This 207-nucleotide RNA was probed chemically with 2A3.
The data come from the RNA Mapping Database (RMDB), library RNAMAK.
[RMDB]
RNA sequence: GGGAACGACUCGAGUAGAGUCGAAAAGAUAUGGACCGUUGUCAGAGAAUGCUAACGAAGAACGGAAGUCGGAAACGACUUCCGGGAGUUAGACAUUCUCUUGGAUUUACGGUCCUAAGUCAAAAGUUCGUAUAGAUGUUCGCAUCUAUACGAACAAGGCUUAAAUUCGGUUCGCCGAAUUUAAGCCAAAAGAAACAACAACAACAAC
Reactivity to 2A3 in 0.01 (KOAc 150mM, MgCl2 10mM, bicine 150mM(pH8.5), 24C), signal-to-noise 1, nucleotides 027 to 156: g020a030u060a020u120g000g000a000c000c020g000u000u030g020u040c020a020g000a000g000a020a000u010g020c000u010a000a000c010g220a300a070g020a020a030c010g010g020a000a000g010u000c000g010g030a050a030a030c030g000a000c010u000u000c000c000g000g010g000a010g010u030u010a000g030a170c000a000u000u000c000u000c000u000u060g000g000a020u000u110u260a000c040g010g020u000c000c000u000a030a010g030u000c020a000a000a160a080g000u000u000c010g020u000a000u010a000g000a020u000g020u010u080c240g020c120a000u000c000u000a000u020a000c030g000a000a000c000a000a010